[RMDB]
RNA sequence: GGGAACGACUCGAGUAGAGUCGAAAAGUUCGUCCACUCCGAUCGAGCCACUAGGAGCUAUCGGAACUCUUAGCGGAGUGACCAAAUCUCUCGACUUCAGUUGGACAUCGUGAGAUCGAGGUCCAAAGUCGUUUGAUGCCUUCGGGUAUCGAACGACAAAAGAAACAACAACAACAAC
Reactivity to 2A3 in 0.01 (KOAc 150mM, MgCl2 10mM, bicine 150mM(pH8.5), 24C), signal-to-noise 9, nucleotides 027 to 126: g020u020u050c020g040u020c050c010a020c010u000c010c010g040a090u100c050g040a020g050c020c020a040c020u030a020g020g020a030g010c010u090a100u140c050g060g040a030a030c000u000c000u020u020a010g030c010g020g000a020g010u030g010a010c000c010a020a050a050u020c020u000c000u020c020g050a060c030u080u050c100a140g030u090u090g040g000a000c000a030u010c010g010u020g070a070g000a040u110c020g030a030g010g000u000c000c000a010a020a020
Reactivity to DMS in 0.01 (KOAc 150mM, MgCl2 10mM, bicine 150mM(pH8.5), 24C), signal-to-noise 9, nucleotides 027 to 126: g020u010u010c090g000u010c030c030a070c020u010c040c020g020a120u020c120g000a040g000c030c040a300c030u000a020g000g000a010g000c050u010a120u020c140g020g020a090a160c020u000c000u000u000a030g000c040g010g010a030g010u010g000a050c020c050a080a090a050u010c010u000c020u000c000g000a050c140u010u020c060a120g020u010u020g000g000a050c190a080u000c000g000u000g000a070g010a050u010c050g010a140g000g000u000c000c050a020a050a080